Chemical mapping of a 177-nucleotide RNA with DMS and 2A3. The 2A3 profile rests on 29,278 reads. Reactivities are rounded to 0.1 and cut off at 0 and 3. The reactions ran in a buffer of 150 mM KOAc, 10 mM MgCl2 and 150 mM bicine (pH 8.5), at 24 C. Reactivities are given for positions 27 through 126.

[RMDB]
RNA sequence: GGGAACGACUCGAGUAGAGUCGAAAAGAUAUGGACUAUGAAGCUCGAUAAGCCUAACUCGGAAACGAGUUGAGGCUUUUGACGAGCUGUAGUCCUAAGUCAAAACACAGGCCUUCGGGCCUGUGAACAAAUACGUAAUGUUCGCAUUACGUAUUUGAAAAGAAACAACAACAACAAC
Reactivity to DMS in 0.01 (KOAc 150mM, MgCl2 10mM, bicine 150mM(pH8.5), 24C), signal-to-noise 9, nucleotides 027 to 126: g010a030u000a200u010g000g000a020c000u000a000u000g010a150a040g020c000u000c000g020a150u010a010a020g010c000c000u000a020a010c000u000c000g010g000a050a040a090c000g010a010g010u000u000g010a020g010g010c000u000u000u000u010g020a190c080g000a010g020c000u000g000u000a000g010u000c000c000u000a010a060g000u000c020a120a100a150a250c010a010c000a000g000g010c000c000u000u010c250g040g010g010c000c000u000g000u000g000a080a150
Reactivity to 2A3 in 0.01 (KOAc 150mM, MgCl2 10mM, bicine 150mM(pH8.5), 24C), signal-to-noise 5, nucleotides 027 to 126: g010a000u040a010u060g010g000a000c010u010a010u120g300a300a070g010c000u010c020g150a230u080a300a010g000c010c000u000a010a000c000u000c000g010g000a050a020a020c010g000a000g010u010u000g090a010g020g000c000u020u000u020u040g040a020c010g000a000g000c010u000g000u000a000g000u000c000c000u000a030a010g000u000c020a020a030a270a050c000a000c000a010g000g010c010c010u180u300c300g120g020g000c000c010u020g000u000g000a000a010